[RMDB]
RNA sequence: GGGAACGACUCGAGUAGAGUCGAAAAGCGACCAAUACGCCGCAAAAGCUGACCGCGAACAGGAAUCGCGGGAUGAACGCGUUGUUGAUCAGGCCGUAGAGUGUCGUCAAGAGCGCCGUGCCAACACCUGAGUGAAGGAGUUCGCUCCUUCACUCAGAAAAGAAACAACAACAACAAC
Reactivity to 2A3 in 0.01 (KOAc 150mM, MgCl2 10mM, bicine 150mM(pH8.5), 24C), signal-to-noise 1, nucleotides 027 to 126: g000c010g000a000c030c000a030a020u110a050c030g000c020c020g030c010a070a060a050a060g000c020u030g040a060c000c020g010c010g010a040a060c080a250g300g020a180a140u000c000g000c000g000g000g000a020u030g030a100a020c070g000c000g020u000u010g050u010u030g060a100u100c080a060g010g060c050c030g020u040a040g040a000g240u140g030u020c010g100u000c000a000a030g010a010g070c010g000c060c080g010u020g030c000c010a060a030c030a050c070
Reactivity to DMS in 0.01 (KOAc 150mM, MgCl2 10mM, bicine 150mM(pH8.5), 24C), signal-to-noise 2, nucleotides 027 to 126: g020c060g010a020c030c070a170a080u000a050c070g040c040c020g010c030a030a130a100a140g010c030u000g030a240c040c000g050c000g020a000a070c120a250g000g000a170a060u000c000g030c000g020g020g010a020u000g010a140a140c190g010c020g030u010u010g000u000u020g000a050u000c120a050g000g000c080c030g000u010a110g000a280g000u040g010u000c010g030u000c070a040a040g040a090g000c060g010c020c080g000u010g000c010c010a080a050c160a080c120
An RNA of 177 nucleotides, treated with 2A3 and DMS and read out base by base. Reactivities are given for positions 27 through 126. Source: RMDB library OK2TST, as collected in RNAgym. For 2A3, 1,176 sequencing reads were counted. For 2A3 the reverse transcriptase was SuperScript II with manganese. The reactions ran in a buffer of 150 mM KOAc, 10 mM MgCl2 and 150 mM bicine (pH 8.5), at 24 C.